Conditions: 150 mM KOAc, 10 mM MgCl2 and 150 mM bicine (pH 8.5), 24 C. Structure probing data (DMS and 2A3) for a 207-nucleotide construct. For DMS, 3,891 sequencing reads were counted. High DMS reactivity at an A or C suggests that its Watson-Crick edge is free.
RNA sequence: GGGAACGACUCGAGUAGAGUCGAAAAGUCCCCAGUAUGACGUUACACUGCUGACUCAUACAUACUGACACCGGUUGCUCAACAGGCUGUGUGGGACAAUAGAAUAACAAGGCUGUCAAUUUGAGCUAAAACUCCUCGGGGUUCGCCCCGAGGAGAAGUCAGUAAUAGUGUUCGCACUAUUACUGACAAAAGAAACAACAACAACAAC
Reactivity to DMS in 0.01 (KOAc 150mM, MgCl2 10mM, bicine 150mM(pH8.5), 24C), signal-to-noise 2, nucleotides 027 to 156: g000u000c000c000c000c040a160g020u000a010u000g020a050c130g010u010u000a050c060a250c130u010g020c070u010g020a050c020u000c000a010u000a060c010a090u000a080c040u000g000a120c060a170c050c050g000g000u010u010g000c030u000c020a050a130c040a030g000g010c040u000g010u020g030u000g020g040g020a110c030a080a200u010a120g010a150a130u000a100a110c070a110a100g020g030c010u000g000u000c020a090a170u000u010u010g030a120g010c050u000a060a070a100a110c010u000c010c000u000c010g020g020g020g050u000u010c280g020c000c000c020c000g020a000g010g010a000g000a000a040
Reactivity to 2A3 in 0.01 (KOAc 150mM, MgCl2 10mM, bicine 150mM(pH8.5), 24C), signal-to-noise 5, nucleotides 027 to 156: g080u020c000c010c000c020a030g010u020a000u010g030a020c070g010u010u020a030c200a070c130u230g050c090u010g030a010c010u010c050a030u070a090c010a010u090a030c070u060g090a080c030a080c070c030g130g020u060u080g010c010u020c040a050a040c010a060g090g000c040u060g010u020g010u060g190g040g040a000c010a030a070u150a090g110a070a050u090a080a030c030a070a030g070g000c030u030g030u100c040a060a100u050u050u140g020a000g010c010u030a040a070a070a100c000u000c000c000u010c010g000g030g010g020u030u030c120g100c000c000c000c000g010a000g010g000a000g000a000a000